[RMDB]
RNA sequence: GGGAACGACUCGAGUAGAGUCGAAAACCUUCUCUCGUCUUCCUCGGUCAACCUCUUAAGUUCCUCUUCUUCUUCCUUGCUGAGGUUCUUCCCUCCCCCGGCUAGCUGCUUCUUCUUGUUCUCGAGGCCAAAAACACUACUUCGGUAGUGUUUUUGGAAAAGAAACAACAACAACAAC
Reactivity to DMS in 0.01 (KOAc 150mM, MgCl2 10mM, bicine 150mM(pH8.5), 24C), signal-to-noise 1, nucleotides 027 to 126: c030c020u010u000c040u000c010u000c080g010u000c040u010u000c050c010u010c070g010g020u000c060a050a140c050c030u010c050u000u000a080a140g020u010u000c020c020u000c040u010u000c030u020u000c030u000u010c030c020u000u000g020c030u000g000a130g040g030u000u000c040u000u000c010c000c010u010c010c010c000c000c000g020g000c060u000a060g030c030u000g000c010u000u000c020u000u000c040u010u000g010u000u010c030u000c030g010a160g020g010
Notes
This 177-nucleotide RNA was probed chemically with DMS. Conditions: 150 mM KOAc, 10 mM MgCl2 and 150 mM bicine (pH 8.5), 24 C. It was measured as part of the RMDB library 15KREP. The DMS profile rests on 1,912 reads.